RNA sequence: GGGAACGACUCGAGUAGAGUCGAAAACGUUUUUCUCUCAUUGCUUUCAACAACAUAAUGCAAAAUUACUGCAAAUAUAGAGAUGUUAAUUGAAAAGUUAACUUCUUUUCUGUUAUUGACUGAUAUCAGCUGCUAUAGCGUUCGCGCUAUAGCAGCUAAAAGAAACAACAACAACAAC
Reactivity to 2A3 in 0.01 (KOAc 150mM, MgCl2 10mM, bicine 150mM(pH8.5), 24C), signal-to-noise 1, nucleotides 027 to 126: c120g000u000u070u000u000u000c130u050c000u000c020a080u030u120g060c030u010u010u010c000a000a000c000a020a000c000a000u030a040a090u130g000c000a000a000a040a300u270u100a120c230u000g020c010a010a090a070u150a030u140a040g020a000g000a000u020g000u000u000a000a040u020u000g150a050a000a000a120g000u000u000a060a000c000u020u040c000u080u000u000u030c000u000g000u000u000a000u020u000g030a010c000u000g010a100u010a090u200c010